Record summary:
Conditions: 150 mM KOAc, 10 mM MgCl2 and 150 mM bicine (pH 8.5), 24 C. Structure probing data (DMS) for a 177-nucleotide construct.
[RMDB]
RNA sequence: GGGAACGACUCGAGUAGAGUCGAAAAUAAUGAUAUUACAGAAAACCCUUACAUUGUGCCCCCAUUCUCGUUCAUUUAAUAUUAUGUUAUAGUGAGCUGAGCCAUUGGACAUCCUGAAUGUGGAUACUCAUAAUGGCUGUUUCGACAGCCAUUAUGAAAAAGAAACAACAACAACAAC
Reactivity to DMS in 0.01 (KOAc 150mM, MgCl2 10mM, bicine 150mM(pH8.5), 24C), signal-to-noise 2, nucleotides 027 to 126: u000a030a090u000g010a130u000a200u000u030a130c080a120g010a070a110a120a100c050c030c000u010u000a070c100a030u000u000g010u000g000c030c000c010c030c030a120u000u000c030u000c020g020u000u000c010a050u000u000u000a030a030u020a060u010u020a120u020g000u000u000a020u010a050g010u000g000a030g000c000u000g020a040g020c180c100a020u000u000g000g000a070c090a050u000c010c030u000g020a060a050u000g010u000g000g000a190u000a050c220